[RMDB]
RNA sequence: GGGAACGACUCGAGUAGAGUCGAAAAAGAAUUAGUCAGUGGGAUUAAACGAGUAGGUGGUUCAAAAUCAAAAGCACAGCGUAGUGUCUUCGUUGUUGGCACAAAUUACCCUUUUAUGGAUGCUACACAUUUUAUCGUCGUUCGCGACGAUAAAAUGAAAAGAAACAACAACAACAAC
Reactivity to DMS in 0.01 (KOAc 150mM, MgCl2 10mM, bicine 150mM(pH8.5), 24C), signal-to-noise 2, nucleotides 027 to 126: a060g000a070a030u010u010a110g000u010c070a090g030u000g020g000g010a100u010u000a080a090a100c060g010a060g010u010a060g000g010u010g010g000u000u010c130a060a050a070a060u010c140a040a040a110a100g000c020a030c050a050g010c110g010u010a040g020u010g010u000c030u010u010c120g000u010u000g020u000u010g020g000c050a070c080a030a040a050u000u000a200c040c010c010u000u000u010u000a070u000g010g000a100u000g000c000u000a030c090a240

The record gives the reactivity of an RNA of 177 nucleotides to DMS. The DMS profile rests on 1,394 reads. Reactivities are rounded to 0.1 and cut off at 0 and 3. The RNA was probed in 150 mM KOAc, 10 mM MgCl2 and 150 mM bicine (pH 8.5) at 24 C. Source: RMDB library OK2TST, as collected in RNAgym. DMS adducts were read by reverse transcription with MarathonRT.